Overview
Conditions: 150 mM KOAc, 10 mM MgCl2 and 150 mM bicine (pH 8.5), 24 C. Structure probing data (2A3 and DMS) for a 177-nucleotide construct. Reactivities are given for positions 27 through 126. The 2A3 profile rests on 1,511 reads.

[RMDB]
RNA sequence: GGGAACGACUCGAGUAGAGUCGAAAAUAGUGGUGCUGUAACAGAUGCUUAUAUUCAAGCAAUGAAAGAUCGUGAGCAAGUUGUAUCAACAUUUAUGGGAAAUGGCUUAGCAAUUCCUCAUGGCACAUCUCCGUUUAUGUUUCGACAUAAACGGAGAAAAAGAAACAACAACAACAAC
Reactivity to 2A3 in 0.01 (KOAc 150mM, MgCl2 10mM, bicine 150mM(pH8.5), 24C), signal-to-noise 2, nucleotides 027 to 126: u150a010g060u040g110g010u020g000c010u050g010u090a000a030c000a050g030a130u050g040c010u060u100a110u040a030u160u140c050a000a000g000c030a040a050u110g020a080a010a000g080a040u090c070g060u050g040a000g000c010a050a050g020u020u030g070u100a110u080c000a000a070c020a090u120u130u080a130u190g080g000g030a000a060a030u040g020g000c030u030u060a050g020c000a000a120u070u000c000c000u050c020a060u020g090g000c020a060c020a130
Reactivity to DMS in 0.01 (KOAc 150mM, MgCl2 10mM, bicine 150mM(pH8.5), 24C), signal-to-noise 3, nucleotides 027 to 126: u010a090g030u000g030g010u000g020c030u000g010u000a040a090c090a080g000a160u010g010c010u000u010a080u010a110u010u010c110a050a040g010c050a040a090u000g010a100a120a080g000a050u010c110g020u000g000a060g010c080a070a080g000u000u000g000u000a110u000c040a060a040c050a040u010u010u000a040u030g010g000g000a030a020a030u000g000g000c060u000u000a090g020c040a010a090u000u000c070c010u000c110a060u000g010g010c090a070c140a160
For 2A3 the reverse transcriptase was SuperScript II with manganese.